[RMDB]
Notes
The record gives the reactivity of an RNA of 207 nucleotides to 2A3.
RNA sequence: GGGAACGACUCGAGUAGAGUCGAAAAGUGAUCGACAAAAUGCGCAGCCUCGCUCCGCCGCUUAAAGAAGUACCGGAAGAACUGUUAACCGCGUGGGUGGUGCUGGCUGAGGAAUUCGUAUGCGCCUCUAAGUUCGGCGACUCGAUCAUUACGGCGCUCCGUCAUGUAUCUUCGGAUACAUGACGGAAAAAGAAACAACAACAACAAC
Reactivity to 2A3 in 0.01 (KOAc 150mM, MgCl2 10mM, bicine 150mM(pH8.5), 24C), signal-to-noise 1, nucleotides 027 to 156: g020u010g010a010u010c020g010a030c040a020a110a040a060u110g020c120g040c040a040g030c000c000u020c010g010c000u050c000c000g010c000c000g080c030u010u180a090a120a120g130a020a030g120u060a090c000c030g010g030a020a010g040a090a080c060u090g130u160u070a120a160c040c000g030c020g020u050g170g000g000u000g010g000u040g000c100u060g000g000c000u000g000a020g000g060a030a150u090u030c020g000u020a000u060g080c000g020c030c000u060c020u110a090a300g040u240u180c060g050g000c040g040a060c000u000c010g000a000u020c070a010u110u000a040c040g000g110c060g040c110
The RNA was probed in 150 mM KOAc, 10 mM MgCl2 and 150 mM bicine (pH 8.5) at 24 C. For 2A3, 459 sequencing reads were counted.